Structure probing data (DMS and 2A3) for a 177-nucleotide construct. For DMS the reverse transcriptase was MarathonRT. For DMS, 20,452 sequencing reads were counted. Values are in units of 0.01, from 0 to 300, in steps of 10.
RNA sequence: GGGAACGACUCGAGUAGAGUCGAAAACAGAGUUUCUCCGUAAUCGAGGAGAUUACGUUAUUGGUAUCGAUGGAUCUUCAGAGGCCCUAAAUUCUUGCCAGUUCUUUUGUGAGCGUUAUUUAGAUAGGUAUAGUACAAGGUUCGCCUUGUACUAUACAAAAGAAACAACAACAACAAC
Reactivity to DMS in 0.01 (KOAc 150mM, MgCl2 10mM, bicine 150mM(pH8.5), 24C), signal-to-noise 9, nucleotides 027 to 126: c120a140g010a140g020u010u000u000c010u000c060c010g010u000a020a020u000c030g010a170g010g010a270g000a010u000u000a010c000g010u000u010a090u010u000g010g010u000a050u000c070g010a090u000g010g010a060u000c040u000u000c090a080g020a140g010g000c020c030c040u000a030a060a100u010u000c050u000u000g000c030c040a100g010u000u000c040u000u000u000u000g010u000g010a080g010c110g010u000u010a050u000u000u010a080g000a120u000a060g010
Reactivity to 2A3 in 0.01 (KOAc 150mM, MgCl2 10mM, bicine 150mM(pH8.5), 24C), signal-to-noise 7, nucleotides 027 to 126: c030a010g110a010g130u030u070u010c020u020c010c010g010u030a020a010u030c030g010a070g190g110a060g120a000u010u030a000c000g020u020u080a120u110u140g080g000u060a040u100c030g020a030u070g040g030a030u010c020u100u040c090a070g030a090g230g030c010c020c000u040a110a090a060u100u040c030u040u070g040c020c010a080g010u080u010c030u060u200u130u120g120u060g060a040g040c030g050u080u020a080u050u160u040a080g050a130u110a080g150